[RMDB]
RNA sequence: GGGAACGACUCGAGUAGAGUCGAAAAGACUGGUACCCACUGUCAGGUAGGCCCCAUAACAGUGCAGGGUUGCCUGGAAGGAAGCGGUAGGUUUGGUAAAGGACAGGGCCGUUGAGCUUUUAGAAGAGGUACUCGUACCAUUCGUGGUACGAGUACCAAAAGAAACAACAACAACAAC
Reactivity to 2A3 in 0.01 (KOAc 150mM, MgCl2 10mM, bicine 150mM(pH8.5), 24C), signal-to-noise 2, nucleotides 027 to 126: g030a020c070u060g050g000u120a090c000c040c000a020c000u030g010u070c000a000g000g120u150a040g080g100c050c010c000c020a040u100a110a100c030a150g070u130g180c090a020g030g050g000u090u090g010c000c000u010g030g000a000a040g120g070a110a040g000c010g040g100u070a030g000g000u040u050u070g050g000u110a010a050a030g040g060a010c060a030g010g030g010c010c000g000u000u040g000a020g000c000u050u020u050u040a000g000a160a030g010a080
Reactivity to DMS in 0.01 (KOAc 150mM, MgCl2 10mM, bicine 150mM(pH8.5), 24C), signal-to-noise 2, nucleotides 027 to 126: g070a030c020u000g020g000u100a010c040c010c000a070c050u000g020u000c000a010g000g110u000a050g080g000c000c010c020c040a050u040a190a170c210a090g030u000g010c210a160g000g020g000u030u040g040c020c000u000g000g000a050a080g000g000a060a090g060c040g060g040u020a030g010g000u000u000u030g000g010u050a020a070a130g040g030a010c030a040g040g000g040c030c090g010u010u000g050a120g010c050u000u000u000u020a120g010a100a150g040a230
Chemical mapping of a 177-nucleotide RNA with 2A3 and DMS. Source: RMDB library OK1LIB, as collected in RNAgym. Values cover nucleotides 27 to 126. The reactions ran in a buffer of 150 mM KOAc, 10 mM MgCl2 and 150 mM bicine (pH 8.5), at 24 C. For DMS the reverse transcriptase was MarathonRT.